[RMDB]
RNA sequence: GGGAACGACUCGAGUAGAGUCGAAAAGUGGAAUGAGUAAAUCUAAGGUGAGGAGGCAUCCUCUUUAGUCCGCAAGACACUUGGUUGAAAAGAAAGCAUAUAUAAGCUGGAAAGUACAUGGUAGUUACUCAUCCAGUUUAUUCGUAAACUGGAUGAGAAAAGAAACAACAACAACAAC
Reactivity to 2A3 in 0.01 (KOAc 150mM, MgCl2 10mM, bicine 150mM(pH8.5), 24C), signal-to-noise 6, nucleotides 027 to 126: g060u040g010g040a090a090u040g010a010g020u030a030a020a020u040c130u150a030a040g140g050u020g020a010g010g000a010g050g110c070a150u030c000c000u010c000u000u000u010a010g000u010c010c030g110c090a020a020g010a000c010a000c010u000u010g000g000u010u020g020a030a010a030a020g070a030a030a010g020c070a020u080a000u030a010u030a210a050g030c010u030g030g030a120a050a000g060u040a040c050a100u070g060g010u040a080g040u030u060a030
Reactivity to DMS in 0.01 (KOAc 150mM, MgCl2 10mM, bicine 150mM(pH8.5), 24C), signal-to-noise 7, nucleotides 027 to 126: g040u000g000g010a250a090u000g010a050g000u000a050a020a010u010c010u040a020a020g000g020u020g010a010g030g010a020g020g020c300a120u000c010c010u000c000u000u010u010a160g030u010c020c050g030c300a120a250g000a030c010a010c020u000u000g020g000u000u010g000a080a060a080a040g000a140a130a080g000c020a070u020a110u020a090u020a070a080g000c020u000g000g000a040a050a030g000u010a040c090a050u020g010g010u020a080g000u010u000a110
This 177-nucleotide RNA was probed chemically with 2A3 and DMS. It was measured as part of the RMDB libraries RFM100 and RFMREP. DMS adducts were read by reverse transcription with MarathonRT. Values cover nucleotides 27 to 126.